[RMDB]
RNA sequence: GGGAACGACUCGAGUAGAGUCGAAAAAUGUCGCCGUCGAAGAGUCACUCGAGAUGGCCGACCUCGCCAGGAUCUUCGAGAACGAUCACGACUUCGUCCACUACAUCGGUCACUGUGAGACCGACGGCCUACUGAUCGUCUUCGGACGAUCAGUAGGAAAAGAAACAACAACAACAAC
Reactivity to DMS in 0.01 (KOAc 150mM, MgCl2 10mM, bicine 150mM(pH8.5), 24C), signal-to-noise 2, nucleotides 027 to 126: a090u010g010u010c020g000c020c060g020u010c020g000a080a100g000a070g000u000c200a130c000u030c020g000a120g000a170u000g040g020c040c070g000a070c160c000u000c040g000c040c120a060g040g000a040u000c010u000u000c050g000a090g010a060a100c080g000a100u010c100a130c030g020a040c100u000u010c030g000u000c020c010a140c100u000a090c160a120u000c040g010g010u010c000a060c140u000g000u030g000a140g030a050c010c010g010a040c110g000g000
Reactivity to 2A3 in 0.01 (KOAc 150mM, MgCl2 10mM, bicine 150mM(pH8.5), 24C), signal-to-noise 2, nucleotides 027 to 126: a000u080g030u040c030g000c060c000g040u040c020g050a070a010g010a020g210u120c040a040c090u000c010g020a050g020a080u060g000g000c010c000g020a030c000c010u050c030g050c030c020a020g000g090a090u040c020u040u050c100g030a030g040a160a090c070g030a050u100c030a020c070g030a070c010u070u040c060g070u000c020c030a070c040u240a040c020a150u060c000g020g030u030c020a040c160u210g020u030g190a050g020a090c010c000g000a010c000g000g020
Chemical mapping of a 177-nucleotide RNA with DMS and 2A3. For 2A3 the reverse transcriptase was SuperScript II with manganese. Values cover nucleotides 27 to 126. It was measured as part of the RMDB library OK2TST. Conditions: 150 mM KOAc, 10 mM MgCl2 and 150 mM bicine (pH 8.5), 24 C.